[RMDB]
RNA sequence: GGGAACGACUCGAGUAGAGUCGAAAACUCAAGCCUUCGUCACUCCAAACGUUUCGGCGAGAAGCAGGCCAUUAUCGCCGGCAUGGCGGCCGACGCGCUGGGCUGGCGUUCGCGACGCGAGGCUGGAUCUAAGCUGUACAUUCGUGUACAGCUUAGAAAAAGAAACAACAACAACAAC
Reactivity to 2A3 in 0.01 (KOAc 150mM, MgCl2 10mM, bicine 150mM(pH8.5), 24C), signal-to-noise 5, nucleotides 027 to 126: c010u010c030a050a000g020c000c000u030u040c010g020u000c000a010c060u050c050c050a070a110a120c040g010u010u110u110c030g020g010c050g020a040g020a030a020g010c050a020g040g040c020c020a100u200u190a130u290c070g000c020c010g060g020c150a210u130g080g030c000g030g030c020c020g040a040c040g010c000g000c030u040g000g060g030c020u040g040g000c000g020u050u080c070g010c070g050a060c020g040c080g030a020g010g000c010u010g010g010a000
Reactivity to DMS in 0.01 (KOAc 150mM, MgCl2 10mM, bicine 150mM(pH8.5), 24C), signal-to-noise 6, nucleotides 027 to 126: c020u000c030a160a070g020c010c010u000u000c020g020u010c020a080c060u000c090c090a050a100a090c070g010u000u000u000c040g020g000c020g020a100g000a110a080g010c050a120g000g010c030c070a060u000u000a090u010c190g010c020c000g010g010c070a060u000g010g010c140g010g010c020c010g010a060c120g000c020g000c050u000g000g010g010c070u000g010g000c030g010u000u000c110g020c050g000a040c080g010c180g010a050g010g000c000u000g000g000a180